[RMDB]
RNA sequence: GGGAACGACUCGAGUAGAGUCGAAAAGCUCUGUGAGACAGAUCGAACAACAAAGAGAGAUCGAAAAUCUUAGGGGAGAGAACGAAUCUGUCGUCUUCUCUAGGACAUUGUCGAUCAGAUGUCCAAAGACCAGGCAUUGGUUCGCCAAUGUUUGGUCAAAAGAAACAACAACAACAAC
Reactivity to DMS in 0.01 (KOAc 150mM, MgCl2 10mM, bicine 150mM(pH8.5), 24C), signal-to-noise 9, nucleotides 027 to 126: g010c050u000c000u000g010u000g010a300g000a020c010a080g000a020u000c000g010a300a240c050a060a110c300a060a130a090g000a070g010a300g000a020u010c010g000a070a070a090a210u000c000u010u000a000g000g000g010g000a010g000a110g000a070a060c020g010a080a130u050c160u040g010u010c050g000u000c000u000u000c000u000c010u000a010g000g010a010c100a070u020u010g010u000c010g000a120u000c010a010g000a030u020g000u010c010c020a080a120a100
Reactivity to 2A3 in 0.01 (KOAc 150mM, MgCl2 10mM, bicine 150mM(pH8.5), 24C), signal-to-noise 9, nucleotides 027 to 126: g010c000u000c000u000g010u000g010a030g000a010c010a010g010a010u010c010g040a050a050c030a070a020c040a040a300a010g110a020g010a000g000a020u010c020g020a050a040a010a050u000c000u000u000a000g000g010g010g000a010g010a010g040a080a030c030g030a100a150u190c140u220g150u060c040g120u000c000u010u000c000u000c000u000a000g010g010a010c020a100u110u140g020u010c000g000a010u000c000a000g010a020u080g040u000c010c010a040a060a010